[RMDB]
Chemical mapping of a 177-nucleotide RNA with 2A3 and DMS. The 2A3 profile rests on 4,808 reads. DMS adducts were read by reverse transcription with MarathonRT. Values cover nucleotides 27 to 126. The RNA was probed in 150 mM KOAc, 10 mM MgCl2 and 150 mM bicine (pH 8.5) at 24 C.
RNA sequence: GGGAACGACUCGAGUAGAGUCGAAAAGAUGGAUCCACCAUGGACUAGAGAGUCAGUACACGAUGAGCAGAUGCUCACAUGGUCGUACUCGAGGAUCCGAUCGUACCGCUAGAUACUCAUGAUCAUGCAUUGUACACGACUUCGGUCGUGUACAAUGAAAAGAAACAACAACAACAAC
Reactivity to 2A3 in 0.01 (KOAc 150mM, MgCl2 10mM, bicine 150mM(pH8.5), 24C), signal-to-noise 5, nucleotides 027 to 126: g030a010u060g010g010a020u000c010c010a000c020c030a130u150g030g020a040c030u080a130g020a030g020a010g300u030c030a010g050u080a060c080a000c110g180a210u040g000a010g000c010a050g100a300u300g070c000u020c030a010c010a040u080g080g000u060c090g040u040a040c020u010c070g040a050g000g000a000u010c010c020g010a020u010c010g010u030a040c020c000g010c060u050a060g020a150u110a130c030u060c150a140u180g070a100u100c040a020u150g000
Reactivity to DMS in 0.01 (KOAc 150mM, MgCl2 10mM, bicine 150mM(pH8.5), 24C), signal-to-noise 5, nucleotides 027 to 126: g000a040u010g000g000a020u010c010c010a170c080c040a090u010g020g010a030c060u010a160g020a130g010a120g010u000c060a070g010u010a050c090a060c070g010a120u010g000a030g020c000a290g010a110u020g010c000u010c010a050c080a090u010g010g020u000c110g000u000a030c040u000c040g000a060g010g000a010u000c000c000g010a030u000c050g010u000a160c020c030g020c130u010a100g000a070u010a050c090u000c130a100u000g020a090u000c090a080u020g000